[RMDB]
Structure probing data (DMS and 2A3) for a 177-nucleotide construct. Values are in units of 0.01, from 0 to 300, in steps of 10. Source: RMDB library RFMREP, as collected in RNAgym. For 2A3 the reverse transcriptase was SuperScript II with manganese.

RNA sequence: GGGAACGACUCGAGUAGAGUCGAAAAUCACACCUUUUUCGGAGCACAAACCCACACAUGCAUCGACACGAUGGCCUGGGUGCCCGCAAGGGUUGGUCAUUGGGAUGCGUGGAGGCCUAACAUCAAACUUUAACUAUGAGUUCGCUCAUAGUUAAAGAAAAGAAACAACAACAACAAC
Reactivity to DMS in 0.01 (KOAc 150mM, MgCl2 10mM, bicine 150mM(pH8.5), 24C), signal-to-noise 7, nucleotides 027 to 126: u000c080a100c090a120c050c020u000u000u000u010u020c070g020g010a120g010c060a070c150a050a090a120c040c010c030a120c160a180c030a040u010g010c000a010u000c010g010a170c070a220c040g010a010u000g000g000c000c000u000g020g030g050u010g010c000c000c000g010c300a110a100g000g020g020u000u000g010g010u010c000a020u000u000g010g010g010a010u000g000c020g030u000g000g000a080g020g010c070c040u000a050a080c100a070u010c210a060a060a150
Reactivity to 2A3 in 0.01 (KOAc 150mM, MgCl2 10mM, bicine 150mM(pH8.5), 24C), signal-to-noise 5, nucleotides 027 to 126: u040c010a010c010a020c040c000u030u060u030u130u160c080g050g020a050g050c040a020c020a110a080a060c010c010c010a020c000a010c000a030u030g010c000a010u010c010g170a080c060a030c250g020a020u000g000g020c000c000u160g160g040g110u180g010c010c010c000g010c030a060a060g000g020g000u060u050g000g000u010c000a010u010u010g040g010g000a000u010g000c010g010u010g010g040a060g040g000c020c020u080a060a030c030a070u090c050a070a010a080